[RMDB]
An RNA of 177 nucleotides, treated with DMS and 2A3 and read out base by base. For 2A3 the reverse transcriptase was SuperScript II with manganese. For DMS the reverse transcriptase was MarathonRT.
RNA sequence: GGGAACGACUCGAGUAGAGUCGAAAAUCUGCAAUGUGACAGUGUUACAGUGGCAUGUGCGCAUAUGACAGAACCAAUUGGAGUGUGCCACGCCCAAUCCUACUGGGCAGGAUGCUACUCACAAUGACAUGAAAGUGUCCUUCGGGACACUUUCAUGAAAAGAAACAACAACAACAAC
Reactivity to DMS in 0.01 (KOAc 150mM, MgCl2 10mM, bicine 150mM(pH8.5), 24C), signal-to-noise 2, nucleotides 027 to 126: u000c030u010g030c060a080a030u010g000u000g010a130c010a150g000u010g010u000u000a120c160a100g010u000g000g010c010a030u010g010u010g010c090g030c000a020u000a040u000g000a150c030a040g000a030a240c070c040a060a060u010u000g000g000a070g000u000g020u000g000c000c010a170c130g010c000c000c010a000a110u010c200c150u000a090c230u000g000g000g040c020a170g010g000a060u000g000c000u010a020c000u000c020a060c030a030a040u000g000a200
Reactivity to 2A3 in 0.01 (KOAc 150mM, MgCl2 10mM, bicine 150mM(pH8.5), 24C), signal-to-noise 3, nucleotides 027 to 126: u000c000u020g000c010a040a100u030g000u030g030a130c020a080g060u000g030u120u140a070c050a140g090u110g130g000c000a000u050g060u110g240c050g030c040a010u140a110u090g030a060c020a020g000a030a050c010c030a050a020u020u020g030g010a020g010u050g050u050g000c020c000a040c050g020c040c000c000a050a140u160c020c050u160a160c090u010g000g010g000c000a000g010g010a050u060g000c000u030a000c000u020c000a150c000a060a070u060g030a020